Chemical mapping of a 177-nucleotide RNA with 2A3 and DMS. For 2A3 the reverse transcriptase was SuperScript II with manganese. The RNA was probed in 150 mM KOAc, 10 mM MgCl2 and 150 mM bicine (pH 8.5) at 24 C.
RNA sequence: GGGAACGACUCGAGUAGAGUCGAAAAGACCGGGGGUAACCCUGGCCGGGCACAGGCCCGUCUGGGUUAGCCCGCCUGAUCAUGCCGUUGGCUUAGAUGAAGGCGGGUGUUACGGGCGGGCUACAGAACAUCAUAGUGGCUUCGGCCACUAUGAUGUAAAAGAAACAACAACAACAAC
Reactivity to 2A3 in 0.01 (KOAc 150mM, MgCl2 10mM, bicine 150mM(pH8.5), 24C), signal-to-noise 3, nucleotides 027 to 126: g020a010c020c000g000g010g020g020g050u130a100a160c000c000c000u000g010g000c010c020g010g040g020c060a080c040a130g060g030c000c000c000g000u000c000u050g090g050g040u090u090a020g000c010c000c010g000c000c000u030g000a030u020c000a030u040g060c020c050g300u160u300g040g000c050u080u100a120g020a100u170g080a070a010g010g000c030g010g020g010u070g020u010u080a000c000g000g000g000c010g030g000g000c020u010a000c010a010g040a010
Reactivity to DMS in 0.01 (KOAc 150mM, MgCl2 10mM, bicine 150mM(pH8.5), 24C), signal-to-noise 2, nucleotides 027 to 126: g030a050c000c000g000g010g000g010g030u090a040a110c020c010c000u000g000g010c000c020g000g000g050c050a110c190a140g020g010c000c000c000g010u010c000u020g000g030g010u030u020a290g000c010c000c000g030c000c000u000g010a130u000c010a090u000g000c000c000g030u000u030g040g020c000u000u020a070g000a000u020g030a230a070g000g000c010g000g030g000u000g010u000u000a020c020g000g000g000c000g000g000g000c010u000a010c090a140g000a110